[RMDB]
Structure probing data (2A3 and DMS) for a 177-nucleotide construct.

RNA sequence: GGGAACGACUCGAGUAGAGUCGAAAAACCAUCCUAUUCGUAGGAUGGUGCACCAUUGCCGAUUGUAUAUAAUACCGCAGGCGGAAAAGCGGUUGAAAUAAGGAACUUGUCAGUUCGCUGACAAGAAUCUAACGAGAAGGUUCGCCUUCUCGUUAGAAAAAGAAACAACAACAACAAC
Reactivity to 2A3 in 0.01 (KOAc 150mM, MgCl2 10mM, bicine 150mM(pH8.5), 24C), signal-to-noise 2, nucleotides 027 to 126: a010c000c000a000u000c000c010u050a030u080u100c300g090u070a010g000g000a000u010g000g000u010g000c000a060c020c000a090u090u200g080c050c020g130a140u100u150g170u110a100u000a010u020a210a180u110a080c010c010g030c040a040g130g000c000g010g080a110a150a040a020g020c020g010g000u000u030g060a080a090a000u150a060a070g080g000a030a040c010u000u010g030u000c000a020g020u030u050c180g000c070u000g000a010c000a010a000g030a000a060
Reactivity to DMS in 0.01 (KOAc 150mM, MgCl2 10mM, bicine 150mM(pH8.5), 24C), signal-to-noise 4, nucleotides 027 to 126: a050c000c000a000u000c000c000u000a020u010u010c170g000u000a000g000g010a010u000g000g000u000g010c160a200c010c020a110u010u010g010c020c030g020a160u010u000g010u010a080u010a100u000a100a120u000a010c010c000g020c020a120g010g020c060g010g000a070a060a100a090g010c020g000g010u000u000g000a040a060a070u000a080a090g000g000a100a120c000u000u010g000u000c000a000g020u000u000c220g030c010u000g000a020c000a000a000g000a080a110
Overview:
The RNA was probed in 150 mM KOAc, 10 mM MgCl2 and 150 mM bicine (pH 8.5) at 24 C.